An RNA of 177 nucleotides, treated with 2A3 and DMS and read out base by base. It was measured as part of the RMDB library OK2TST. The reactions ran in a buffer of 150 mM KOAc, 10 mM MgCl2 and 150 mM bicine (pH 8.5), at 24 C.
[RMDB]
RNA sequence: GGGAACGACUCGAGUAGAGUCGAAAAUGAAAUACGGUGGUUAUCGCGGGUAUUUCACAGCUAUGCAACAGUUGGAAACCACAGACAUGCCAUUACUUGCCGUGGAGGAUGGCAGCUAUGAAAUCAAAGCUCUCACAAAAUUCGUUUUGUGAGAGCUAAAAGAAACAACAACAACAAC
Reactivity to 2A3 in 0.01 (KOAc 150mM, MgCl2 10mM, bicine 150mM(pH8.5), 24C), signal-to-noise 2, nucleotides 027 to 126: u060g000a000a010a020u130a030c080g080g000u030g010g090u100u080a090u140c030g000c010g010g100g040u060a090u020u100u050c040a030c010a010g010c000u080a020u260g090c090a100a040c020a120g020u040u030g050g000a070a030a030c000c000a020c020a030g050a050c090a080u030g000c020c000a000u040u100a300c080u000u030g060c050c000g020u050g030g000a000g010g000a020u000g010g000c020a010g000c000u040a080u250g140a090a120a010u190c020a040a050
Reactivity to DMS in 0.01 (KOAc 150mM, MgCl2 10mM, bicine 150mM(pH8.5), 24C), signal-to-noise 2, nucleotides 027 to 126: u000g010a000a040a060u000a000c040g050g030u000g010g010u000u000a100u000c040g060c060g000g020g000u000a030u020u000u000c000a100c040a100g000c050u000a080u010g020c200a060a120c190a050g000u000u010g020g010a050a040a120c030c000a060c120a100g010a120c160a100u000g000c030c000a050u000u000a120c030u000u000g050c000c130g000u020g000g010a000g000g000a020u010g000g020c000a030g000c140u010a030u000g000a060a070a080u040c140a070a100